RNA sequence: GGGAACGACUCGAGUAGAGUCGAAAAAUUGAUGAACUGAGAGUUGCUUCCAGUCCAGAGCGCACCAUCUGGAAUUCCAGUCUGAGGUUACAAUUAGAACUCCUGACCCCAGAUUCAACUUUGCAAAACUCUUAAAUGUGUUCGCACAUUUAAGAGUAAAAGAAACAACAACAACAAC
Reactivity to DMS in 0.01 (KOAc 150mM, MgCl2 10mM, bicine 150mM(pH8.5), 24C), signal-to-noise 6, nucleotides 027 to 126: a110u000u020g010a040u010g000a290a060c040u000g000a110g010a040g020u000u000g020c080u010u000c010c020a130g000u020c030c030a060g000a080g010c090g020c060a030c060c030a110u000c000u000g000g000a070a100u040u010c080c080a060g000u000c030u000g010a070g010g000u000u000a060c140a030a090u010u020a100g010a100a120c100u010c040c050u000g010a080c010c000c010c010a040g010a070u010u010c130a050a100c110u010u020u010g010c080a040a060a100
Reactivity to 2A3 in 0.01 (KOAc 150mM, MgCl2 10mM, bicine 150mM(pH8.5), 24C), signal-to-noise 9, nucleotides 027 to 126: a000u130u140g010a030u060g030a040a040c020u030g040a030g000a000g260u040u050g030c070u040u000c010c000a010g030u000c010c000a010g010a010g010c080g000c040a050c040c010a080u010c000u010g010g020a010a040u130u040c050c010a010g040u000c020u030g030a030g040g030u030u040a050c040a050a060u160u100a120g050a110a050c030u030c030c030u030g040a030c000c000c000c010a000g000a020u050u040c020a070a080c050u080u110u090g030c030a030a040a050
Structure probing data (DMS and 2A3) for a 177-nucleotide construct. For DMS the reverse transcriptase was MarathonRT. The reactions ran in a buffer of 150 mM KOAc, 10 mM MgCl2 and 150 mM bicine (pH 8.5), at 24 C. DMS (dimethyl sulfate) methylates the pairing face of unpaired adenines and cytosines. The data come from the RNA Mapping Database (RMDB), libraries RFM100 and RFMREP.